[RMDB]
RNA sequence: GGGAACGACUCGAGUAGAGUCGAAAAGAUAUGGAACGUUUAUGGGAGAUCCCUGUCGGAAACGACAGUGCGAUCGAAGAACAUACUGACGUUCCUAAGUCAAAACGACGAAGUUCGCUUCGUCGAACUUAUAGUAACGCUUCGGCGUUACUAUAAGAAAAGAAACAACAACAACAAC
Reactivity to 2A3 in 0.01 (KOAc 150mM, MgCl2 10mM, bicine 150mM(pH8.5), 24C), signal-to-noise 3, nucleotides 027 to 126: g000a010u010a010u060g000g010a000a010c010g000u010u060u120a040u030g030g000g020a260g010a030u000c000c010c000u000g010u000c020g000g000a000a010a000c000g000a000c010a000g030u050g140c300g010a000u020c010g030a050a040g020a000a010c010a000u030a030c110u130g080a020c010g000u000u020c000c010u000a010a000g000u000c040a020a020a150a200c020g000a000c000g010a000a000g020u060u220c300g040c180u010u010c010g000u000c000g000a020a000
Reactivity to DMS in 0.01 (KOAc 150mM, MgCl2 10mM, bicine 150mM(pH8.5), 24C), signal-to-noise 4, nucleotides 027 to 126: g000a020u010a040u010g000g000a010a020c010g020u000u000u000a000u000g000g000g010a060g000a010u000c000c010c000u010g010u000c000g010g000a020a010a040c000g010a020c000a020g000u010g000c240g010a010u000c000g010a080a140g020a210a300c010a010u000a040c300u010g000a030c000g010u000u000c000c010u000a000a100g000u000c000a070a070a110a210c040g020a030c000g010a020a010g010u000u010c260g000c010u000u000c000g010u000c010g000a030a080